[RMDB]
RNA sequence: GGGAACGACUCGAGUAGAGUCGAAAAAAACACUGACUGAAGUUAUCCCCGGUAUUCAUAGCACUGAAGGGGCUGUAGAGCUACCAGAUGAUAACUGGUUCUUCGUGAUGGAUAGCAUCCCUGAAGGUAAGGUACUGGCUGCUAAUGAAAGGAGUGAUAGACAAAUCCGAUUCGUCGGAUUUGUCUAAAAAGAAACAACAACAACAAC
Reactivity to 2A3 in 0.01 (KOAc 150mM, MgCl2 10mM, bicine 150mM(pH8.5), 24C), signal-to-noise 1, nucleotides 027 to 156: a000a000a000c080a030c030u140g300a090c060u090g070a040a010g000u000u000a070u010c020c000c020c030g000g000u060a070u090u120c040a060u050a060g070c080a020c150u060g020a050a000g110g000g020g000c000u070g000u130a070g000a020g150c020u080a020c000c000a020g010a040u120g000a080u160a140a020c020u020g020g000u060u030c020u060u000c060g080u060g110a130u070g020g150a060u000a020g080c010a010u130c040c000c020u060g020a060a030g000g030u040a000a060g040g000u020a020c000u020g040g000c070u020g000c000u050a010a130u070g040a040a110a000g030g000a060g070u010g020a040

Conditions: 150 mM KOAc, 10 mM MgCl2 and 150 mM bicine (pH 8.5), 24 C. Chemical mapping of a 207-nucleotide RNA with 2A3. Reactivities are given for positions 27 through 156. 2A3 adducts were read by reverse transcription with SuperScript II with manganese. The 2A3 profile rests on 415 reads.